[RMDB]
RNA sequence: GGGAACGACUCGAGUAGAGUCGAAAAGGGGAUGGAGGCCGGGCCGUGGCCAGAGCAGAUACGUAGGCCCAUGAAAUUGAUGAACUGAGAGUUGCUCGCAGUCCUCAGCGCACCAUCUGGAAUUCUAGAUUUUAUCUUCGUUCGCGAAGAUAAAAUCAAAAGAAACAACAACAACAAC
Reactivity to DMS in 0.01 (KOAc 150mM, MgCl2 10mM, bicine 150mM(pH8.5), 24C), signal-to-noise 3, nucleotides 027 to 126: g030g000g010g030a100u000g020g000a130g000g040c080c160g010g000g030c000c020g020u040g000g000c050c010a060g000a090g010c070a070g000a110u050a060c100g010u000a110g010g020c030c050c020a130u030g000a040a070a150u050u050g010a090u010g000a080a040c060u020g010a050g000a090g000u030u010g000c020u020c050g020c040a030g000u000c050c010u000c000a080g000c140g020c060a050c020c020a030u020c040u020g000g030a090a130u000u000c040u010a080
Reactivity to 2A3 in 0.01 (KOAc 150mM, MgCl2 10mM, bicine 150mM(pH8.5), 24C), signal-to-noise 4, nucleotides 027 to 126: g040g010g030g010a050u070g020g020a040g040g060c030c010g010g000g000c000c010g080u160g040g000c000c020a010g010a000g000c030a010g030a090u120a130c050g080u090a050g030g000c000c010c010a020u120g030a000a050a150u120u160g030a040u080g040a060a080c030u040g000a030g000a000g050u080u240g060c030u040c020g030c030a000g030u070c010c010u020c000a000g030c020g000c030a050c030c010a040u010c050u110g050g090a070a090u060u000c020u020a060